Description:
Source: RMDB library OK3TST, as collected in RNAgym. This 207-nucleotide RNA was probed chemically with 2A3. For 2A3, 364 sequencing reads were counted. 2A3 adducts were read by reverse transcription with SuperScript II with manganese. Conditions: 150 mM KOAc, 10 mM MgCl2 and 150 mM bicine (pH 8.5), 24 C.
[RMDB]
RNA sequence: GGGAACGACUCGAGUAGAGUCGAAAAGAGCGCGGUAUUUAUCAUAGCUAACCUUGAGACGUUCCGCAAUUGAUUCAGUAGUCAAUCGUUCGUAGUUCUCAACAUAGUGGUCAAGUUCAUUGGUGGUGCGCGAUACAUUUUGCUUGAUUUGAGCAACGUGCUGGACUUGAUUCGUCAAGUCCAGCACAAAAGAAACAACAACAACAAC
Reactivity to 2A3 in 0.01 (KOAc 150mM, MgCl2 10mM, bicine 150mM(pH8.5), 24C), signal-to-noise 1, nucleotides 027 to 156: g150a050g060c100g000c030g080g070u110a150u050u080u080a160u140c120a140u060a000g040c010u050a030a100c020c010u010u070g010a000g000a020c030g000u000u020c060c000g060c030a030a160u040u040g030a070u130u130c110a110g060u050a010g050u070c000a040a080u050c050g020u040u080c000g000u000a130g070u040u010c000u000c030a020a160c050a160u100a010g030u040g060g020u000c090a090a070g050u090u180c030a010u010u100g000g000u020g000g000u010g010c010g010c050g040a000u000a100c090a050u060u080u020u050g000c000u050u000g190a210u230u140u210g030a000g000c020a000a010c160